[RMDB]
Structure probing data (2A3 and DMS) for a 207-nucleotide construct. The RNA was probed in 150 mM KOAc, 10 mM MgCl2 and 150 mM bicine (pH 8.5) at 24 C. Source: RMDB library OK3TST, as collected in RNAgym. The 2A3 profile rests on 2,015 reads. DMS adducts were read by reverse transcription with MarathonRT.
RNA sequence: GGGAACGACUCGAGUAGAGUCGAAAAAAGUGCACACAUCUGCAUCAUUAUUGCCAAAAAAGAAUGCUCUGCUGAGGAAUGUACUGGGGUCUUGAACAUGAACAUUUUCUUCAUGGCAGCAGAGGGAGCACAAGAGUGCUUAAUAAAACCAGUGCAACCUAGUAAAUUACUUCGGUAAUUUACUAGGAAAAGAAACAACAACAACAAC
Reactivity to 2A3 in 0.01 (KOAc 150mM, MgCl2 10mM, bicine 150mM(pH8.5), 24C), signal-to-noise 3, nucleotides 027 to 156: a000a010g070u070g030c060a070c010a010c020a150u090c050u060g010c010a020u070c020a020u100u150a090u140u180g060c030c050a070a070a040a060a000a040g110a050a050u100g000c000u010c010u010g000c000u020g030a030g020g120a170a070u080g000u020a010c010u020g030g010g010g040u030c020u080u060g040a020a000c010a020u000g030a050a020c010a130u150u230u090u050c040u030u000c000a010u000g010g000c000a000g000c000a000g020a000g010g020g010a020g010c000a010c020a090a080g170a040g070u010g000c000u050u040a040a010u080a080a100a010a040c000c010a000g010u020g020c010a010a010
Reactivity to DMS in 0.01 (KOAc 150mM, MgCl2 10mM, bicine 150mM(pH8.5), 24C), signal-to-noise 2, nucleotides 027 to 156: a070a080g020u000g000c010a060c010a120c170a150u010c030u000g060c010a060u000c090a110u010u000a050u000u000g000c000c040a000a030a090a100a080a080g010a130a090u000g000c050u000c000u000g010c010u010g000a150g020g010a090a120u010g020u000a030c030u010g010g010g010g020u000c050u000u000g000a070a030c010a010u000g010a010a010c050a150u000u000u000u000c020u000u000c040a050u000g010g000c010a050g010c000a040g010a050g070g000g000a030g050c010a020c000a060a180g010a300g010u010g020c000u020u000a030a070u010a020a030a070a080c000c010a020g010u000g020c010a060a300